The record gives the reactivity of an RNA of 207 nucleotides to 2A3. Conditions: 150 mM KOAc, 10 mM MgCl2 and 150 mM bicine (pH 8.5), 24 C. It was measured as part of the RMDB library RNAMAK. Reactivities are given for positions 27 through 156. The 2A3 profile rests on 780 reads.
RNA sequence: GGGAACGACUCGAGUAGAGUCGAAAAUCCUAAGUCGAGUGCAAUGACGAUCGGGCUAGGCAACAGCCUAUCGGAAACGAUAGGACAUGCCUGGUCCGAUUAAGACAGCACUCGAUAUGGAAAAAUCAUGCUUUGCGUUUCGACGCAAAGCAUGAAACUGUCUAGUACCCUUCGGGGUACUAGACAGAAAAGAAACAACAACAACAAC
Reactivity to 2A3 in 0.01 (KOAc 150mM, MgCl2 10mM, bicine 150mM(pH8.5), 24C), signal-to-noise 1, nucleotides 027 to 156: u040c000c000u000a070a020g040u000c000g000a010g000u010g050c050a180a300u120g020a130c080g000a030u020c000g000g000g000c010u030a030g010g000c030a090a030c040a270g110c000c000u000a000u000c010g000g060a100a050a030c020g000a000u000a000g010g010a000c000a080u040g000c000c000u000g010g000u000c020c000g000a000u130u010a010a010g040a040c010a150g280c000a000c000u010c000g000a000u010a010u050g070g020a070a070a000a000a030u080c000a020u050g000c000u000u030u000g000c000g050u090u100u100c270g100a020c000g000c000a000a000a000g000c000a000u010g000a000a000a000